Record summary:
The record gives the reactivity of an RNA of 207 nucleotides to 2A3 and DMS. For DMS the reverse transcriptase was MarathonRT. The reactions ran in a buffer of 150 mM KOAc, 10 mM MgCl2 and 150 mM bicine (pH 8.5), at 24 C. Reactivities are given for positions 27 through 156. For 2A3, 14,703 sequencing reads were counted. It was measured as part of the RMDB library RNAMAK.
[RMDB]
RNA sequence: GGGAACGACUCGAGUAGAGUCGAAAAACCUUUGUGCCAAUUUAAAUGUAUGGCUAGAAAUGUCCGUCCCAUUGGGACGGAUACAUUUCUUGGACCCAUACGGUAAAUUGGCACUCUGGUAAAGCACUUCUUUUUAGUUCGCUAAAAAGAAGUGCAACACGUAGUAGUAGUUCGCUACUACUACGUGAAAAGAAACAACAACAACAAC
Reactivity to 2A3 in 0.01 (KOAc 150mM, MgCl2 10mM, bicine 150mM(pH8.5), 24C), signal-to-noise 7, nucleotides 027 to 156: a000c010c000u010u010u010g000u000g000c000c000a010a000u010u000u030a120a190a100u130g010u010a000u000g010g010c010u010a000g010a000a000a000u000g010u000c000c000g000u010c040c020c130a300u220u300g010g010g000a000c000g000g000a000u010a000c000a000u000u000u000c000u010u070g080g080a120c030c010c000a000u000a000c000g000g000u010a000a010a000u000u010g010g000c000a000c000u000c000u000g000g010u080a160a050a020g000c000a000c000u000u000c000u020u000u000u000u000a010g010u050u060c250g010c150u000a000a000a000a000a000g000a000a000g000u000g000c000a000a000
Reactivity to DMS in 0.01 (KOAc 150mM, MgCl2 10mM, bicine 150mM(pH8.5), 24C), signal-to-noise 2, nucleotides 027 to 156: a030c000c000u000u000u000g010u000g010c000c000a010a010u010u000u000a020a090a170u000g010u000a000u010g000g030c000u000a020g010a020a010a020u010g010u000c000c000g010u000c010c000c000a300u010u000g050g070g020a030c020g010g010a000u010a000c010a030u000u000u000c000u000u000g020g010a190c230c000c000a020u000a010c000g020g020u000a000a020a020u010u010g010g000c000a010c000u000c020u010g010g020u000a050a080a190g010c020a010c000u000u000c010u000u000u000u000u000a020g020u000u010c300g050c000u010a010a010a000a020a020g000a030a000g020u010g000c010a000a040